The data come from the RNA Mapping Database (RMDB), libraries RFM100 and RFMREP. Chemical mapping of a 177-nucleotide RNA with 2A3 and DMS. The RNA was probed in 150 mM KOAc, 10 mM MgCl2 and 150 mM bicine (pH 8.5) at 24 C. DMS adducts were read by reverse transcription with MarathonRT.

RNA sequence: GGGAACGACUCGAGUAGAGUCGAAAAAUCGAAGCAAAAGGUUCGCUGAAUUAUGAUUGCGUGGCACGCUCGGUCAAGCUCGUGUGGUAUCACACACAUGGCGCCAGGUCACACCAAAAGCUCCUCCAUACCUGGACCGAUUCGUCGGUCCAGGUAUAAAAGAAACAACAACAACAAC
Reactivity to 2A3 in 0.01 (KOAc 150mM, MgCl2 10mM, bicine 150mM(pH8.5), 24C), signal-to-noise 2, nucleotides 027 to 126: a000u090c040g030a030a010g040c060a020a090a040a040g090g000u010u090c000g030c060u080g110a080a150u290u030a080u180g040a050u200u020g110c070g000u050g040g000c050a010c070g000c000u000c000g020g000u100c100a060a000g000c000u000c120g000u020g000u020g050g060u090a250u260c020a050c000a000c000a000c000a070u050g000g000c000g000c000c040a040g020g000u000c000a020c000a060c020c000a010a000a140a000g000c000u000c010c000u080c010c010
Reactivity to DMS in 0.01 (KOAc 150mM, MgCl2 10mM, bicine 150mM(pH8.5), 24C), signal-to-noise 2, nucleotides 027 to 126: a060u000c030g000a170a070g020c090a040a080a050a160g010g000u020u000c100g000c010u030g000a140a120u000u020a120u100g000a100u000u030g010c010g040u000g000g020c020a050c210g020c040u020c050g030g000u000c120a050a140g000c030u000c130g000u000g000u010g000g000u030a070u100c100a040c100a050c020a100c090a130u000g010g010c040g010c050c020a040g020g000u020c020a060c080a110c050c020a010a010a020a030g000c030u000c030c030u060c090c040